Background
Source: RMDB libraries RFM100 and RFMREP, as collected in RNAgym. Structure probing data (2A3 and DMS) for a 177-nucleotide construct.
[RMDB]
RNA sequence: GGGAACGACUCGAGUAGAGUCGAAAACAACGUUUAUAGUAAAAGCAGUCAUAGCAGAGAAGGAAUCGAAUUAAAACCUUUAUCAAUAUGGCCAAAAUUGAUAAUAUUCCUUGCAAUAGCAUGUUAGAUACGUCUAAUUCUUCGGAAUUAGACGUAUAAAAGAAACAACAACAACAAC
Reactivity to 2A3 in 0.01 (KOAc 150mM, MgCl2 10mM, bicine 150mM(pH8.5), 24C), signal-to-noise 4, nucleotides 027 to 126: c020a010a020c040g010u030u110u070a280u090a080g160u160a050a060a050a000g040c030a010g030u010c010a020u050a050g040c070a010g040a010g000a110a000g030g050a010a040u150c140g010a080a000u130u130a090a050a050a070c050c000u040u010u000a160u020c000a010a040u030a050u070g120g000c070c040a080a000a040a060u050u040g040a020u000a110a030u060a080u060u060c000c000u020u120g000c010a000a090u020a090g010c030a030u040g050u050u080a070g010
Reactivity to DMS in 0.01 (KOAc 150mM, MgCl2 10mM, bicine 150mM(pH8.5), 24C), signal-to-noise 5, nucleotides 027 to 126: c080a120a110c110g000u000u000u020a090u010a090g010u020a060a060a070a080g030c100a070g000u010c030a060u010a080g010c040a120g010a150g020a050a030g000g000a050a060u010c210g000a070a070u010u010a060a050a110a150c090c040u000u000u000a030u000c000a010a040u010a050u000g010g000c100c140a040a030a100a030u010u000g000a040u020a030a030u000a080u000u000c010c010u000u010g010c050a070a080u020a080g020c040a030u000g010u020u010a080g000
Annotation: For DMS the reverse transcriptase was MarathonRT.